[RMDB]
RNA sequence: GGGAACGACUCGAGUAGAGUCGAAAAAGUAUUGUCUUAGCUUGGAUUAAUUUUCUUGCUUACUGUAAUUUUAGAUAAUAUAGCUUUGUAAUUAGAGAUUUUAUGUGUAAACCACAAAAAUGUUUACAUGAAGGCCAUUAUUACAGAUGUGACGUGCGCAUGUGACGUAAUUCGUUACGUCACAUGCAAAAGAAACAACAACAACAAC
Reactivity to 2A3 in 0.01 (KOAc 150mM, MgCl2 10mM, bicine 150mM(pH8.5), 24C), signal-to-noise 2, nucleotides 027 to 156: a010g070u030a020u050u130g010u000c010u080u030a010g000c010u020u030g020g020a030u030u060a060a120u110u160u010u000c050u010u030g000c000u010u030a020c010u010g010u040a070a100u010u040u030u110a010g010a060u120a250a080u100a050u050a100g020c000u040u050u140g090u100a060a100u060u030a000g010a020g050a220u160u000u080u110a090u190g000u000g030u020a040a080a030c100c020a060c140a060a090a010a050a100u130g000u030u020u000a010c010a020u060g060a040a030g060g010c000c020a000u030u020a010u010u000a050c010a010g060a080u080g080u030g070a030c050g050u070g070c050